The data come from the RNA Mapping Database (RMDB), library OK1LIB. An RNA of 177 nucleotides, treated with 2A3 and DMS and read out base by base. 2A3 adducts were read by reverse transcription with SuperScript II with manganese. The reactions ran in a buffer of 150 mM KOAc, 10 mM MgCl2 and 150 mM bicine (pH 8.5), at 24 C.
[RMDB]
RNA sequence: GGGAACGACUCGAGUAGAGUCGAAAAUCCAUAGUGGGGGGGCAUCGCUGACCGUAGCACCUAACUGUGUGGCACCCAUUAAGAGGGAUAUACUGAAGGAGACUCGGUUCCAAAUGAUGAAGGAAGACACUACUCGGGUUUUCGAACCCGAGUAGUGAAAAGAAACAACAACAACAAC
Reactivity to 2A3 in 0.01 (KOAc 150mM, MgCl2 10mM, bicine 150mM(pH8.5), 24C), signal-to-noise 3, nucleotides 027 to 126: u000c010c000a060u050a050g110u140g000g000g000g000g000g040g000c030a030u070c020g030c050u030g020a030c030c000g060u080a020g000c030a070c050c020u040a110a100c020u030g000u010g010u080g120g000c040a090c000c000c000a050u120u210a100a060g090a160g040g100g010a000u060a010u010a120c060u070g070a090a020g040g040a020g020a030c020u000c050g010g030u010u030c020c010a040a000a220u250g020a060u100g050a050a050g060g020a000a000g030a010
Reactivity to DMS in 0.01 (KOAc 150mM, MgCl2 10mM, bicine 150mM(pH8.5), 24C), signal-to-noise 3, nucleotides 027 to 126: u020c060c000a140u060a070g050u000g010g010g020g000g010g000g020c050a040u010c100g030c100u020g000a040c110c030g020u010a050g050c080a170c060c040u000a070a120c110u000g010u000g060u000g000g000c080a150c010c010c010a080u000u030a080a050g000a190g010g000g000a060u010a050u030a130c040u000g000a170a020g000g000a110g000a130c040u010c030g020g030u000u010c030c020a050a080a120u000g010a050u000g030a040a050g000g000a050a030g000a110